[RMDB]
RNA sequence: GGGAACGACUCGAGUAGAGUCGAAAAGAUAUGGAUCCACGUAGGGAGCGUGGUGGUCGGAAACGACCAUGACGCGAGGAUCUACGGGAUCCUAAGUCAAACGGCAAUAAGUUCGCUUAUUGCCGAACGGAUUAUAUCAGUUCGCUGAUAUAAUCCGAAAAGAAACAACAACAACAAC
Reactivity to 2A3 in 0.01 (KOAc 150mM, MgCl2 10mM, bicine 150mM(pH8.5), 24C), signal-to-noise 6, nucleotides 027 to 126: g010a000u020a010u060g010g000a000u000c000c010a260c170g000u000a010g000g030g040a160g020c010g000u060g060g010u000g000g010u110c000g000g000a030a010a010c010g000a010c010c020a010u030g090a000c000g050c010g050a200g050g000a040u000c000u000a000c000g000g010g010a000u000c000c000u000a010a000g010u010c030a100a090a110c020g000g000c010a000a010u010a010a010g080u060u200c300g040c250u000u000a000u010u000g000c000c000g000a020a010
Reactivity to DMS in 0.01 (KOAc 150mM, MgCl2 10mM, bicine 150mM(pH8.5), 24C), signal-to-noise 5, nucleotides 027 to 126: g000a030u000a100u000g010g000a000u000c000c000a150c020g010u000a010g020g000g010a030g020c000g030u000g020g070u000g010g010u010c000g010g000a030a030a050c000g020a020c000c000a000u000g000a020c010g020c010g010a110g010g010a050u000c000u000a000c010g000g000g010a000u000c000c000u000a000a070g000u000c010a130a140a280c030g000g010c010a010a010u000a000a010g020u000u010c300g010c000u000u000a000u000u000g000c000c000g000a020a050
Chemical mapping of a 177-nucleotide RNA with 2A3 and DMS. 2A3 adducts were read by reverse transcription with SuperScript II with manganese. The RNA was probed in 150 mM KOAc, 10 mM MgCl2 and 150 mM bicine (pH 8.5) at 24 C. For DMS, 12,001 sequencing reads were counted.